[RMDB]
Annotation
An RNA of 177 nucleotides, treated with DMS and read out base by base. For DMS, 893 sequencing reads were counted. The reactions ran in a buffer of 150 mM KOAc, 10 mM MgCl2 and 150 mM bicine (pH 8.5), at 24 C. Reactivities are given for positions 27 through 126.
RNA sequence: GGGAACGACUCGAGUAGAGUCGAAAAACUAGGGUCAUGGUGACAGUAGGUAUUUGCAGUGUGGCUAUAUUUUUGGCUGUUACCUAGAAUUUACUUUCUAAGGCAGGCUCAUUGGGUAUAAUACACACGCUGACAGAAGUUUCGACUUCUGUCAGCGAAAAGAAACAACAACAACAAC
Reactivity to DMS in 0.01 (KOAc 150mM, MgCl2 10mM, bicine 150mM(pH8.5), 24C), signal-to-noise 1, nucleotides 027 to 126: a170c070u000a050g020g010g000u000c030a110u010g010g020u000g000a050c090a060g000u010a020g020g010u000a050u000u000u000g030c080a160g000u000g030u000g000g050c040u000a020u000a030u010u000u010u000u010g000g010c010u000g000u000u000a150c000c020u000a060g010a060a030u000u000u000a140c250u000u000u000c010u020a100a070g000g010c130a080g000g000c010u000c040a070u010u000g000g020g010u000a010u000a000a080u020a070c060a060c080a090